RNA sequence: GGGAACGACUCGAGUAGAGUCGAAAAUUUUCAUGACUGACUAUCAAAGAUCCUAUCCUUUUGGCAAACUUUUAGGCCAAGUUCUUCAUACUCUCAGAGAAGUCAAGGAUGAGAAAACAGGAAAAGCGUUAAACGGAUGUUUCGACAUCCGUUUAACAAAAGAAACAACAACAACAAC
Reactivity to DMS in 0.01 (KOAc 150mM, MgCl2 10mM, bicine 150mM(pH8.5), 24C), signal-to-noise 2, nucleotides 027 to 126: u000u000u000u020c030a060u010g000a110c040u000g010a030c020u000a160u000c020a040a170a160g000a050u000c030c010u000a020u000c040c040u020u000u020u000g000g000c020a040a120a120c110u000u000u010u010a130g020g010c010c000a040a030g010u010u010c020u010u000c070a080u000a110c100u000c070u010c090a140g020a150g010a070a070g000u010c080a040a040g020g000a040u000g000a030g000a060a030a060a070c170a000g010g000a050a080a120a130g010c210
Reactivity to 2A3 in 0.01 (KOAc 150mM, MgCl2 10mM, bicine 150mM(pH8.5), 24C), signal-to-noise 2, nucleotides 027 to 126: u000u030u000u040c040a030u030g140a110c000u010g000a000c030u050a050u290c040a130a020a030g050a030u000c030c000u020a070u020c030c010u160u100u050u050g000g030c090a190a070a150c110u130u130u190u230a140g020g010c000c000a000a010g000u030u020c030u070u040c010a040u000a190c010u000c000u010c070a010g040a030g010a300a030g030u020c040a020a020g030g020a000u020g000a010g000a040a040a010a030c050a040g020g130a070a070a070a000g170c080